[RMDB]
RNA sequence: GGGAACGACUCGAGUAGAGUCGAAAAAAGGUCCGCUCGGGACGGUCGGCAACCGUCCUUUUGAGUGCAAGAGCGUAAGCGGGCUUGACUGCGAGGCCCACGAGCCGAGCAGGUGCGAAAGCAGGCUGAGGCUAGCUUAUUUCGAUAAGCUAGCCUCAAAAGAAACAACAACAACAAC
Reactivity to DMS in 0.01 (KOAc 150mM, MgCl2 10mM, bicine 150mM(pH8.5), 24C), signal-to-noise 1, nucleotides 027 to 126: a000a000g000g010u000c000c000g000c000u010c110g000g000g030a000c000g010g000u010c120g110g000c180a260a240c000c000g000u000c030c020u000u000u000u000g000a140g050u000g010c120a110a220g000a130g040c000g000u000a180a000g000c000g000g000g010c030u000u000g000a180c000u000g030c060g000a300g000g040c000c010c130a120c300g000a010g090c000c000g000a300g010c000a030g000g040u000g000c070g000a300a010a050g050c000a090g000g070c030u040
Reactivity to 2A3 in 0.01 (KOAc 150mM, MgCl2 10mM, bicine 150mM(pH8.5), 24C), signal-to-noise 2, nucleotides 027 to 126: a020a000g000g030u000c000c000g000c000u060c040g030g000g000a000c020g010g020u020c020g110g030c010a020a040c000c000g000u030c000c010u080u010u030u070g030a040g000u110g000c060a170a050g010a000g110c060g070u150a080a010g010c030g000g010g000c000u000u030g050a020c010u020g000c000g000a010g010g000c000c000c000a060c230g010a030g000c000c000g010a000g020c000a010g020g080u160g020c030g030a110a030a000g010c090a070g040g070c010u090